[RMDB]
RNA sequence: GGGAACGACUCGAGUAGAGUCGAAAACAAAAACGGAUUGUGUCAGUAAUCACAACAAACAAAAACAAAUGGAUUGUGUCCAUAAUCACAAAAACAAAACAAAAGGGAUUGUGUCCGUAAUCACAAACCACUAGUCGGGAUUCGUCCCGACUAGUGGAAAAGAAACAACAACAACAAC
Reactivity to 2A3 in 0.01 (KOAc 150mM, MgCl2 10mM, bicine 150mM(pH8.5), 24C), signal-to-noise 1, nucleotides 027 to 126: c110a000a030a000a000a020c060g060g020a030u000u000g030u020g060u030c020a080g090u030a160a030u030c000a030c000a060a230c010a000a140a000c030a000a160a050a000a000c100a170a260a090u050g050g000a020u000u030g080u000g020u040c000c000a000u090a190a060u170c000a000c020a200a000a030a020a000c030a000a070a000a000c020a000a180a030a000g000g000g060a200u050u050g000u000g020u080c000c040g020u040a120a000u000c000a000c030a080a020a020

This 177-nucleotide RNA was probed chemically with 2A3.
For 2A3 the reverse transcriptase was SuperScript II with manganese.
Reactivities are rounded to 0.1 and cut off at 0 and 3.
Source: RMDB library OK1LIB, as collected in RNAgym.